[RMDB]
RNA sequence: GGGAACGACUCGAGUAGAGUCGAAAAGAUAUGGAUGAUCGAGCAUCCGAGGCGAAUCGGAAACGAUUCGCUACCCACCGGAUGAACUACUCGAAUCCUAAGUCAAACACAAUCUUCGGAUUGUGAAGUAACGGUAUUCGUUCGCGAAUACCGUUACAAAAGAAACAACAACAACAAC
Reactivity to DMS in 0.01 (KOAc 150mM, MgCl2 10mM, bicine 150mM(pH8.5), 24C), signal-to-noise 2, nucleotides 027 to 126: g020a050u010a270u010g000g010a020u010g000a120u000c010g000a000g000c000a050u000c000c000g030a050g030g010c000g010a000a000u000c000g000g000a110a070a240c010g000a000u000u020c000g030c000u010a000c020c010c040a300c060c000g000g000a010u000g000a020a020c090u000a280c000u000c020g000a030a030u000c000c000u000a030a140g020u010c050a050a180a130c000a020c000a010a000u000c000u000u010c250g010g000a010u000u010g050u010g000a020a150
Reactivity to 2A3 in 0.01 (KOAc 150mM, MgCl2 10mM, bicine 150mM(pH8.5), 24C), signal-to-noise 2, nucleotides 027 to 126: g110a120u190a130u250g020g000a000u100g060a110u160c020g020a000g000c010a000u000c000c030g000a020g000g000c000g010a000a000u010c000g000g060a050a060a050c010g000a000u010u000c000g000c010u000a010c020c010c030a030c030c000g000g000a010u000g020a060a060c070u130a070c010u300c040g030a030a030u000c000c000u000a130a010g070u090c100a150a050a030c020a010c010a010a000u000c010u060u090c270g190g020a000u000u000g020u000g100a060a010
This 177-nucleotide RNA was probed chemically with DMS and 2A3. For 2A3 the reverse transcriptase was SuperScript II with manganese. The reactions ran in a buffer of 150 mM KOAc, 10 mM MgCl2 and 150 mM bicine (pH 8.5), at 24 C. Source: RMDB library TTRDEL, as collected in RNAgym. For 2A3, 2,431 sequencing reads were counted. The DMS profile rests on 1,033 reads.